[RMDB]
This 177-nucleotide RNA was probed chemically with 2A3 and DMS. The RNA was probed in 150 mM KOAc, 10 mM MgCl2 and 150 mM bicine (pH 8.5) at 24 C. For 2A3, 715 sequencing reads were counted. The DMS profile rests on 970 reads.
RNA sequence: GGGAACGACUCGAGUAGAGUCGAAAAUGCGGGACUUCCGAGCUUGACGUUUCGAAUGAGCACAUCGCCUUCGAAUUCACAUCCCACAAAAUGCCGAAGGGCUCGUCAAUGGAGGGGCGCUGGAACGCAGCCCUACCCGAUUCGUCGGGUAGGGCUGAAAAGAAACAACAACAACAAC
Reactivity to 2A3 in 0.01 (KOAc 150mM, MgCl2 10mM, bicine 150mM(pH8.5), 24C), signal-to-noise 1, nucleotides 027 to 126: u100g000c020g000g000g070a150c050u080u040c100c030g030a080g040c020u030u050g030a060c050g190u000u060u000c020g060a110a090u100g020a000g240c010a050c000a270u120c200g020c030c020u000u020c000g000a000a000u040u010c060a010c070a120u020c000c030c000a060c020a000a100a000a000u170g070c030c000g060a090a050g000g050g010c000u000c020g100u020c050a110a100u190g060g100a060g000g020g040g000c100g060c130u010g020g010a050a030c080g020
Reactivity to DMS in 0.01 (KOAc 150mM, MgCl2 10mM, bicine 150mM(pH8.5), 24C), signal-to-noise 2, nucleotides 027 to 126: u010g000c060g000g030g020a050c060u000u000c040c030g000a170g050c160u000u000g040a050c210g000u000u020u010c050g010a050a030u020g000a090g010c020a170c170a100u020c140g000c000c030u000u000c010g000a020a030u000u000c110a120c130a110u000c000c020c010a070c260a060a040a130a060u000g010c080c030g010a120a110g090g000g010c070u010c000g000u000c050a010a090u010g020g000a120g000g010g000g040c040g000c040u000g000g000a060a080c160g000